[RMDB]
RNA sequence: GGGAACGACUCGAGUAGAGUCGAAAAACAAAGAGCAACACGCGCAGUCACGCAGGCAGAUGGAAUAAUCUGCCAAGAAUAACUAAUGGACGGUAGACUGCGCGAACCACGGACCAAUAGAAAAAAAGUUUUACUAAAGAUUCGUCUUUAGUAAAACAAAAGAAACAACAACAACAAC
Reactivity to 2A3 in 0.01 (KOAc 150mM, MgCl2 10mM, bicine 150mM(pH8.5), 24C), signal-to-noise 2, nucleotides 027 to 126: a010c090a000a100a020g080a000g060c040a000a050c050a030c080g000c000g000c000a010g010u000c010a000c050g000c040a060g000g000c000a000g020a010u000g040g050a140a030u100a100a060u060c000u000g000c000c000a000a000g000a010a040u160a040a010c070u080a100a080u110g060g070a060c050g020g060u060a070g000a000c000u000g000c010g000c000g000a010a000c010c000a010c020g070g040a000c020c000a080a130u220a280g150a010a130a000a010a000a010a030
Reactivity to DMS in 0.01 (KOAc 150mM, MgCl2 10mM, bicine 150mM(pH8.5), 24C), signal-to-noise 2, nucleotides 027 to 126: a060c100a050a070a060g000a100g010c070a080a070c180a180c040g030c020g010c000a010g000u000c010a120c040g010c080a100g010g010c000a000g000a010u000g020g020a110a100u020a110a040u000c000u000g000c000c000a040a010g010a130a060u020a060a120c110u020a080a090u020g010g000a090c020g020g000u000a080g000a020c020u010g010c000g020c000g000a030a030c100c070a070c080g000g010a050c030c050a070a080u010a090g000a000a000a070a090a070a180a030

Record summary:
The record gives the reactivity of an RNA of 177 nucleotides to 2A3 and DMS. 2A3 is a SHAPE reagent: it acylates the 2'-hydroxyl of flexible nucleotides of all four kinds. The data come from the RNA Mapping Database (RMDB), library M2PK90. For DMS, 1,855 sequencing reads were counted.